The data come from the RNA Mapping Database (RMDB), library M2RFPK. Chemical mapping of a 207-nucleotide RNA with DMS and 2A3. The 2A3 profile rests on 4,326 reads. DMS adducts were read by reverse transcription with MarathonRT.

RNA sequence: GGGAACGACUCGAGUAGAGUCGAAAAGCUUAAUAACCUGCGCUGAGCCCUUCUCCCCCAGCUUGCCGGUGUCCUAGGGAAUUGGAAGGUCAUCCUUCACAGGAUCGUGUGGAAGUCCUGCUCGGGGUCCAAACAUGGUAAUUCGUUACCAUGUUAACAUACAUUAUUCGUUCGCGAAUAAUGUAUGAAAAGAAACAACAACAACAAC
Reactivity to DMS in 0.01 (KOAc 150mM, MgCl2 10mM, bicine 150mM(pH8.5), 24C), signal-to-noise 4, nucleotides 027 to 156: g020c040u000u000a070a120u010a090a100c040c010u000g010c020g010c040u000g020a100g010c040c020c030u000u010c050u010c030c010c010c010c020a110g010c030u010u000g030c020c020g020g030u000g010u000c030c020u020a120g030g020g020a090a120u010u010g020g020a090a060g000g020u000c060a110u000c030c010u000u000c090a110c050a040g010g010a050u000c050g010u010g050u000g020g010a110a100g010u000c020c000u000g010c040u000c050g010g010g030g020u010c040c050a090a040a030c000a010u000g010g020u000a020a070u000u010c300g020u000u000a010c000c000a010u000g010u000u010a020a170
Reactivity to 2A3 in 0.01 (KOAc 150mM, MgCl2 10mM, bicine 150mM(pH8.5), 24C), signal-to-noise 4, nucleotides 027 to 156: g020c030u120u130a070a010u080a160a230c020c040u080g030c050g010c070u080g050a080g020c040c020c000u120u030c070u060c020c010c000c000c000a010g000c020u020u090g040c000c020g000g010u030g030u040c010c010u070a060g010g020g050a090a110u130u090g050g020a050a010g040g020u080c030a110u150c000c000u040u070c020a040c000a070g020g010a050u040c040g040u050g000u050g090g020a040a020g030u010c010c000u000g010c010u010c020g020g010g000g010u000c020c030a030a020a000c010a000u010g000g000u020a020a030u040u040c070g050u040u000a000c000c000a000u000g000u000u000a010a000